[RMDB]
This 177-nucleotide RNA was probed chemically with 2A3 and DMS. High 2A3 reactivity points to a flexible backbone, as in loops and unpaired stretches. For 2A3 the reverse transcriptase was SuperScript II with manganese. Values are in units of 0.01, from 0 to 300, in steps of 10. Conditions: 150 mM KOAc, 10 mM MgCl2 and 150 mM bicine (pH 8.5), 24 C. The DMS profile rests on 1,573 reads.

RNA sequence: GGGAACGACUCGAGUAGAGUCGAAAAGGUGAUGGGGUCGAUGGGGGAGAAGGUCAGUAUGCCGUUCCUCACGGGUCCCCUGGUCCAGUCGGAUGGAGGUGUCAUGACGGGGACGCAGGACUCUUCCUCACAGUGCCUGGUUCGCCAGGCACUGUGAAAAAGAAACAACAACAACAAC
Reactivity to 2A3 in 0.01 (KOAc 150mM, MgCl2 10mM, bicine 150mM(pH8.5), 24C), signal-to-noise 1, nucleotides 027 to 126: g130g020u110g050a160u160g000g000g000g070u080c030g070a230u100g000g000g020g030g000a050g090a140a060g100g040u080c060a000g130u120a140u200g040c000c000g010u010u030c000c000u000c010a030c010g020g020g090u060c000c000c000c000u020g000g000u070c020c000a030g060u030c050g040g050a040u070g140g020a150g160g060u220g010u070c020a090u110g030a040c050g100g000g110g040a030c040g030c050a010g030g020a060c010u020c010u040u000c050c010
Reactivity to DMS in 0.01 (KOAc 150mM, MgCl2 10mM, bicine 150mM(pH8.5), 24C), signal-to-noise 1, nucleotides 027 to 126: g010g010u000g000a070u010g020g020g000g020u000c070g000a080u020g020g000g000g020g030a030g030a080a080g020g020u010c090a120g010u010a120u010g030c070c000g010u010u000c010c000u100c040a110c090g020g010g010u000c000c030c020c020u030g000g000u010c030c030a140g000u010c080g000g010a060u020g020g010a130g000g000u000g010u000c040a060u000g010a070c080g000g020g000g000a070c030g010c050a060g020g000a080c030u020c050u010u010c020c010